[RMDB]
RNA sequence: GGGAACGACUCGAGUAGAGUCGAAAAGUGCAACAAUUCGUUGUUGCACGAAAAUGGGAAUUAGCCAAGUUGGUAAGGCAUAGCACUUUGACUGCUAGAUGCAAAGGUUCGAGUCCUUUAUUCCCAGCCACCAAAUCGAACGUUUCGACGUUCGAAAGCUGUUGUCAGGUUUCGACCUGACAACAGCAAAAGAAACAACAACAACAAC
Reactivity to 2A3 in 0.01 (KOAc 150mM, MgCl2 10mM, bicine 150mM(pH8.5), 24C), signal-to-noise 2, nucleotides 027 to 156: g010u000g010c010a000a000c000a000a060u060u110c240g030u110u020g000u000u000g000c010a000c000g000a010a000a000a000u030g000g000g000a000a020u010u000a020g020c010c020a030a010g080u200u130g270g160u090a020a030g000g000c000a000u000a000g010c000a010c080u230u260u300g110a190c090u100g000c000u010a030g020a030u300g020c000a000a000a000g010g000u000u000c020g000a000g000u010c000c000u040u000u000a010u010u010c000c000c000a000g000c000c010a120c030c020a050a090a030u050c000g000a000a000c000g010u000u080u120c170g080a030c010g000u000u000c000g010a050a010a000